[RMDB]
RNA sequence: GGGAACGACUCGAGUAGAGUCGAAAAACAUUCUGUACCACAUUUUGUAUGCAGACCCAGAUUUUGACCCAGAUUUUUGUCCAUCAAACUCUUGUAUUGUGGGGCUGCCUUUUAGCUAAGAGUUCAGCUUACAAUGCUAAUUCGUUAGCAUUGUAAGAAAAGAAACAACAACAACAAC
Reactivity to DMS in 0.01 (KOAc 150mM, MgCl2 10mM, bicine 150mM(pH8.5), 24C), signal-to-noise 9, nucleotides 027 to 126: a080c100a090u000u000c020u000g010u000a090c100c070a060c050a100u000u010u000u000g020u000a120u000g000c030a030g000a070c060c030c020a140g000a110u000u000u010u010g000a100c040c030c050a150g000a090u000u010u010u010u010g010u010c040c070a070u000c080a080a060a070c090u000c020u000u010g010u000a070u000u000g010u000g020g010g000g010c030u000g010c140c070u000u010u000u010a070g010c060u010a050a060g000a080g010u000u000c100a110g010
Reactivity to 2A3 in 0.01 (KOAc 150mM, MgCl2 10mM, bicine 150mM(pH8.5), 24C), signal-to-noise 8, nucleotides 027 to 126: a010c020a060u120u060c020u060g030u050a050c060c000a030c030a070u100u160u150u260g090u080a060u120g000c000a000g010a070c010c010c010a030g040a080u130u160u060u140g040a040c000c020c030a030g060a180u080u080u020u120u250g050u050c040c010a060u070c030a120a060a060c010u040c010u060u050g060u090a120u070u140g050u080g030g030g030g010c010u020g030c000c020u080u240u050u100a030g010c030u030a070a010g030a000g090u080u100c020a010g020